Structure probing data (DMS and 2A3) for a 177-nucleotide construct.
The reactions ran in a buffer of 150 mM KOAc, 10 mM MgCl2 and 150 mM bicine (pH 8.5), at 24 C.
For DMS the reverse transcriptase was MarathonRT.
The DMS profile rests on 3,229 reads.
Reactivities are given for positions 27 through 126.
The 2A3 profile rests on 3,084 reads.
[RMDB]
RNA sequence: GGGAACGACUCGAGUAGAGUCGAAAAAGUAUGAAGCUCAUUGAAGAUAGAGGCAAUAUGCAUAUAUGCCUAUUCAAGAAACAGCAGCAUGGAGGAGAUAGGGAAAUAUAUGUGCUGGGAAGAGAAGACUCGAAUUUGAAUUCGUUCAAAUUCGAGUAAAAGAAACAACAACAACAAC
Reactivity to DMS in 0.01 (KOAc 150mM, MgCl2 10mM, bicine 150mM(pH8.5), 24C), signal-to-noise 4, nucleotides 027 to 126: a100g010u000a050u000g000a120a120g020c040u000c070a120u010u000g010a050a040g010a180u020a130g020a080g000g000c020a050a060u000a040u010g020c210a070u000a050u000a040u010g000c000c000u000a090u000u000c040a030a090g000a080a050a070c160a050g010c070a050g020c070a050u010g010g010a060g000g000a070g000a060u010a060g000g010g000a020a040a030u000a050u010a060u020g000u000g010c020u000g000g010g000a060a080g000a090g020a080a100g000
Reactivity to 2A3 in 0.01 (KOAc 150mM, MgCl2 10mM, bicine 150mM(pH8.5), 24C), signal-to-noise 4, nucleotides 027 to 126: a020g130u110a090u120g070a080a030g010c010u020c060a060u020u110g030a050a030g050a080u210a100g200a030g070g000c010a030a110u050a050u190g060c070a020u090a010u020a040u270g020c000c010u030a090u040u040c040a030a030g040a120a120a020c030a020g060c000a000g020c020a050u060g020g020a040g020g010a070g010a050u080a040g030g030g050a000a120a000u130a020u020a010u070g040u030g000c020u020g010g040g010a090a010g010a020g000a110a000g030